[RMDB]
RNA sequence: GGGAACGACUCGAGUAGAGUCGAAAAAGGUGGCAUGCGAUUAUGCAAACAUCGAGGUCCUGGAAAAACCGAUGUAAAAUAAAUAACAGCACCCGUUUAGCGAGCGUGGUGAUAGGCGUUAUAGGCUGUCCAUGAUGGUGUUCGCACCAUCAUGGACAAAAGAAACAACAACAACAAC
Reactivity to DMS in 0.01 (KOAc 150mM, MgCl2 10mM, bicine 150mM(pH8.5), 24C), signal-to-noise 1, nucleotides 027 to 126: a030g000g000u000g000g010c110a030u000g020c010g000a040u010u130a000u000g030c090a110a170a290c040a000u000c000g000a190g000g000u030c070c110u000g000g000a200a070a020a010a080c000c000g000a040u000g000u000a040a040a040a010u040a000a080a010u050a000a000c130a030g000c130a000c030c000c020g030u000u000u000a070g030c160g000a120g020c050g000u000g010g000u000g000a090u030a070g000g000c130g000u000u010a010u040a190g000g000c000u000
Reactivity to 2A3 in 0.01 (KOAc 150mM, MgCl2 10mM, bicine 150mM(pH8.5), 24C), signal-to-noise 2, nucleotides 027 to 126: a000g120g040u080g010g000c020a010u070g000c070g160a130u060u100a040u190g060c040a080a060a000c030a010u000c000g000a110g020g010u180c020c110u090g050g000a040a060a000a020a020c000c000g000a000u040g070u180a010a040a030a030u290a040a040a030u270a040a000c020a000g010c000a010c000c000c030g010u040u020u070a040g010c020g030a020g040c020g020u150g020g000u060g010a020u090a080g110g010c020g010u010u060a020u030a080g110g010c060u060